[RMDB]
RNA sequence: GGGAACGACUCGAGUAGAGUCGAAAAGAUAUGGAACCCCUGCUAUGACUCCAGGUGUAGCUCGACGGUUCGGAAACGAACCCAAGAGCGCAGAUACCUGGAGGUCAUAGCAGGGGUUCCUAAGUCAUCCAUUAUGAUAGUUCGCUAUCAUAAUGGAAAAAGAAACAACAACAACAAC
Reactivity to DMS in 0.01 (KOAc 150mM, MgCl2 10mM, bicine 150mM(pH8.5), 24C), signal-to-noise 4, nucleotides 027 to 126: g000a060u010a300u010g010g000a010a000c020c000c000c010u000g010c000u000a000u000g000a130c000u010c010c000a020g040g000u000g000u000a220g010c000u010c000g010a300c300g000g000u000u000c010g010g000a080a110a290c010g000a010a010c010c000c010a040a300g000a010g020c000g010c180a090g000a070u000a030c000c000u000g000g000a010g000g010u010c010a010u000a020g000c020a000g050g000g020g000u010u000c000c000u000a010a050g010u000c020a220